[RMDB]
RNA sequence: GGGAACGACUCGAGUAGAGUCGAAAAUAAGUGGUGUUGACGUUUGGGUCCUACGCAACGAGACCCCGUGAACCUUGUCAGGUCCGGAAGGAAGCAGCAAUAAGCGGGUUCUCUCGUGUGCCGUAGGCAGUUUUAGGUAGUUCGCUACCUAAAACUGAAAAGAAACAACAACAACAAC
Reactivity to 2A3 in 0.01 (KOAc 150mM, MgCl2 10mM, bicine 150mM(pH8.5), 24C), signal-to-noise 3, nucleotides 027 to 126: u300a120a030g080u040g050g030u040g040u050u040g030a060c070g020u010u060u060g130g000g020u020c030c000u000a000c000g000c010a010a000c000g010a010g020a060c010c000c010c000g010u040g030a030a060c030c030u000u000g050u090c000a000g020g020u000c000c000g050g070a050a060g020g000a020a000g020c000a000g000c000a000a030u040a070a010g020c000g000g000g000u140u080c030u000c000u010c030g020u130g120u060g030c070c030g000u000a010g000g020
Reactivity to DMS in 0.01 (KOAc 150mM, MgCl2 10mM, bicine 150mM(pH8.5), 24C), signal-to-noise 6, nucleotides 027 to 126: u010a120a090g010u000g000g020u000g010u000u000g010a050c240g000u010u000u000g010g020g020u000c000c000u000a020c020g020c030a070a030c010g000a040g000a010c200c010c000c000g000u000g000a140a130c300c290u000u010g000u000c010a300g000g000u000c000c000g000g040a110a140g010g000a020a010g000c020a220g000c010a010a010u010a120a300g000c000g000g000g010u000u000c290u000c010u000c010g000u000g000u000g020c100c050g000u000a020g010g010
The record gives the reactivity of an RNA of 177 nucleotides to 2A3 and DMS. The data come from the RNA Mapping Database (RMDB), library RFMREP. For DMS, 6,295 sequencing reads were counted. The reactions ran in a buffer of 150 mM KOAc, 10 mM MgCl2 and 150 mM bicine (pH 8.5), at 24 C. 2A3 adducts were read by reverse transcription with SuperScript II with manganese.